[RMDB]
RNA sequence: GGGAACGACUCGAGUAGAGUCGAAAACUCAAAUGGUGUUUCCAGUUCUAAAUCUUUGAGGAAUUGCCACACUGUCUUCCACAAUGGUUGAACUAAUUCACAUUCCCACCAACAGUGUAAAAGCAUUCCUAUUUCUUCACAACCACCAUCAGCAUCAGUCCCGUAUUUAGUUCGCUAAAUACGGGACAAAAGAAACAACAACAACAAC
Reactivity to DMS in 0.01 (KOAc 150mM, MgCl2 10mM, bicine 150mM(pH8.5), 24C), signal-to-noise 1, nucleotides 027 to 156: c020u010c030a070a150a100u010g000g050u000g010u000u000u000c020c040a120g030u000u000c020u000a070a110a100u000c040u000u050u000g000a160g010g030a010a020u020u010g000c040c080a050c010a020c030u000g040u020c050u000u010c090c010a130c130a050a020u010g000g020u000u000g010a050a210c050u000a050a140u010u010c050a100c020a180u000u000c000c000c020a120c020c050a030a040c040a020g010u030g020u000a060a030a100a080g010c020a090u000u010c000c020u010a060u010u000u020c000u000u010c110a060c000a140a080c050c050a050c040c020a090u000c060a090g010c060a110u000c040a230
Reactivity to 2A3 in 0.01 (KOAc 150mM, MgCl2 10mM, bicine 150mM(pH8.5), 24C), signal-to-noise 3, nucleotides 027 to 156: c040u050c010a020a040a090u030g020g000u020g020u070u040u070c070c040a020g010u070u040c060u160a070a170a130u090c130u100u100u210g060a010g000g020a000a020u120u100g030c040c000a000c000a000c010u020g000u080c020u110u030c090c030a090c060a100a170u100g060g000u040u070g040a070a030c050u100a130a180u130u130c020a010c020a080u060u060c000c040c010a040c000c010a010a020c010a010g030u020g000u090a040a160a020a000g020c010a020u010u040c000c000u000a050u020u110u010c010u090u070c040a020c030a120a060c000c030a020c000c010a020u020c080a040g010c010a050u000c030a080